RNA sequence: GGGAACGACUCGAGUAGAGUCGAAAACAGCCUAACAGCCGCAUGAGAUUAGUGGCUAUGCUCUAUACCCCACUCAGAUCUAAUGGCUCAGGUGAUGAUGUCUUUACUGUCUCUUGCAGGGUUUUGACUUCAGUUAAGUCUUCGGACUUAACUGAAGAAAAGAAACAACAACAACAAC
Reactivity to DMS in 0.01 (KOAc 150mM, MgCl2 10mM, bicine 150mM(pH8.5), 24C), signal-to-noise 3, nucleotides 027 to 126: c120a090g010c020c030u000a080a120c230a090g000c010c020g030c090a080u000g010a070g010a120u000u010a050g030u010g020g000c080u000a040u000g010c080u020c060u000a070u000a120c190c170c010c020a050c040u000c130a050g000a080u000c070u000a100a100u000g000g020c030u000c100a070g010g020u000g020a130u000g000a060u000g010u000c030u000u010u010a070c060u010g010u010c050u000c020u000u010g020c050a070g000g010g010u000u000u000u000g010a160
Reactivity to 2A3 in 0.01 (KOAc 150mM, MgCl2 10mM, bicine 150mM(pH8.5), 24C), signal-to-noise 2, nucleotides 027 to 126: c010a020g030c040c040u060a080a020c040a060g030c000c020g060c070a040u190g070a030g020a180u070u160a060g020u020g010g000c010u020a030u050g000c020u000c000u080a060u060a120c020c010c000c000a020c030u020c030a030g000a090u000c010u070a100a060u120g040g020c000u010c050a000g020g050u030g040a100u020g030a030u080g040u000c010u020u110u070a100c030u010g030u060c000u020c000u060u080g000c020a040g060g000g030u010u030u070u110g040a020
Notes: The record gives the reactivity of an RNA of 177 nucleotides to DMS and 2A3. The DMS profile rests on 2,817 reads. It was measured as part of the RMDB library OK2TST.